[RMDB]
This 177-nucleotide RNA was probed chemically with DMS. The reactions ran in a buffer of 150 mM KOAc, 10 mM MgCl2 and 150 mM bicine (pH 8.5), at 24 C.
RNA sequence: GGGAACGACUCGAGUAGAGUCGAAAAAAAGUCGCUGCUAUUUUUAUCAGGAUCUGAUGUUACCUGUGUUACUCGACAGUUUGCGUGGCGACUGGCAGGCCAACGAACUGGCGCGACCGCUGGCGCGCCCCCGGGGGAUUUUCGAAUCCCCCGGGGGAAAAGAAACAACAACAACAAC
Reactivity to DMS in 0.01 (KOAc 150mM, MgCl2 10mM, bicine 150mM(pH8.5), 24C), signal-to-noise 1, nucleotides 027 to 126: a060a080a030g020u000c020g030c010u000g030c030u010a080u010u020u010u000u010a010u010c050a010g020g000a120u010c060u010g000a080u000g010u000u010a080c060c020u010g010u000g020u010u000a120c120u000c010g000a040c050a020g040u000u010u010g000c190g020u000g010g000c010g000a080c040u010g000g010c030a080g000g020c010c010a070a090c080g000a070a060c090u010g010g010c000g020c080g010a120c120c060g000c090u000g010g020c020g030c110g020